[RMDB]
RNA sequence: GGGAACGACUCGAGUAGAGUCGAAAAUCUACGAGUUGCUAGCUCACGGGGCGGCAAUGGACCCAAUAAUGUUCACUGUGACCCUCCUAGCGUCGAUCGCCUCGGCAUGGAUCCUAAGCAGCAUAGGCGUUCUGGUAGCAUUCGUGCUACCAGAACGAAAAGAAACAACAACAACAAC
Reactivity to DMS in 0.01 (KOAc 150mM, MgCl2 10mM, bicine 150mM(pH8.5), 24C), signal-to-noise 2, nucleotides 027 to 126: u000c020u020a050c070g000a070g000u000u000g030c030u000a050g020c030u000c050a180c130g000g000g020g000c050g020g000c010a040a010u000g000g000a040c010c170c060a130a130u030a100a080u010g000u000u000c000a010c060u000g000u010g000a070c050c010c030u000c100c070u010a070g000c080g000u000c020g000a120u010c040g010c040c000u000c050g010g000c040a120u000g010g000a080u000c060c020u010a090a160g030c030a050g020c080a050u010a060g010g030
Reactivity to 2A3 in 0.01 (KOAc 150mM, MgCl2 10mM, bicine 150mM(pH8.5), 24C), signal-to-noise 1, nucleotides 027 to 126: u020c020u070a010c080g050a060g020u070u050g030c000u040a050g000c000u000c030a070c020g010g000g020g000c040g000g000c000a010a050u020g020g030a020c000c010c170a010a060u270a090a090u150g060u020u040c050a030c070u040g030u120g230a170c000c020c000u000c010c010u000a020g030c010g070u070c000g050a070u050c020g010c020c020u010c050g050g000c020a030u100g020g000a030u030c000c010u040a090a000g050c000a000g000c040a040u000a000g050g000